[RMDB]
RNA sequence: GGGAACGACUCGAGUAGAGUCGAAAAAAAUUUUGUUAAUCAUAAAAAUUGUUCUCCCAAGAAGUAUACUGGAAAUAUCCAGAUGUGGAGUUAUAAUUAAAAAUGAAGGCAAAAUAGCUUCCCUUAAGUUCGCACUAAUUUUCGAAUUAGUGCGAACAAAAGAAACAACAACAACAAC
Reactivity to 2A3 in 0.01 (KOAc 150mM, MgCl2 10mM, bicine 150mM(pH8.5), 24C), signal-to-noise 1, nucleotides 027 to 126: a000a000a000u060u010u010u010g060u060u010a260a100u010c000a000u070a000a210a000a000a000u000u020g000u000u000c000u010c020c000c020a030a080g230a130a030g070u160a140u060a200c000u010g000g050a000a000a200u120a250u230c000c010a000g000a030u050g080u300g060g000a010g020u130u060a000u010a080a010u050u020a000a100a100a000a000u000g020a020a000g050g000c010a000a000a000a000u000a000g060c050u000u020c000c000c000u010u040a150a100

An RNA of 177 nucleotides, treated with 2A3 and read out base by base. For 2A3 the reverse transcriptase was SuperScript II with manganese. The RNA was probed in 150 mM KOAc, 10 mM MgCl2 and 150 mM bicine (pH 8.5) at 24 C.